An RNA of 177 nucleotides, treated with DMS and read out base by base.
Values are in units of 0.01, from 0 to 300, in steps of 10.
The RNA was probed in 150 mM KOAc, 10 mM MgCl2 and 150 mM bicine (pH 8.5) at 24 C.
Values cover nucleotides 27 to 126.

RNA sequence: GGGAACGACUCGAGUAGAGUCGAAAAGAUAUGGACUUAGCUAGCUUCCCUGGUUCGACGAAGAGGUAAAGCUCGGAAACGAGCUUUACCUCAGAGAACCACCAAGCUUGGACCUAAGUCCUAAGUCCUUAUACCAAAGCUUCGGCUUUGGUAUAAGAAAAGAAACAACAACAACAAC
Reactivity to DMS in 0.01 (KOAc 150mM, MgCl2 10mM, bicine 150mM(pH8.5), 24C), signal-to-noise 2, nucleotides 027 to 126: g000a160u000a300u030g020g020a000c000u000u000a010g010c040u000a030g010c010u000u000c110c070c120u000g020g010u000u000c000g020a280c300g000a140a090g000a010g000g010u000a000a020a030g040c000u000c010g030g010a120a090a280c000g020a000g010c000u000u000u000a000c000c000u000c000a000g010a090g010a010a000c000c000a030c070c250a030a020g000c010u020u010g010g000a200c300c030u000a030a010g020u000c010c000u000a020a070g010u010c020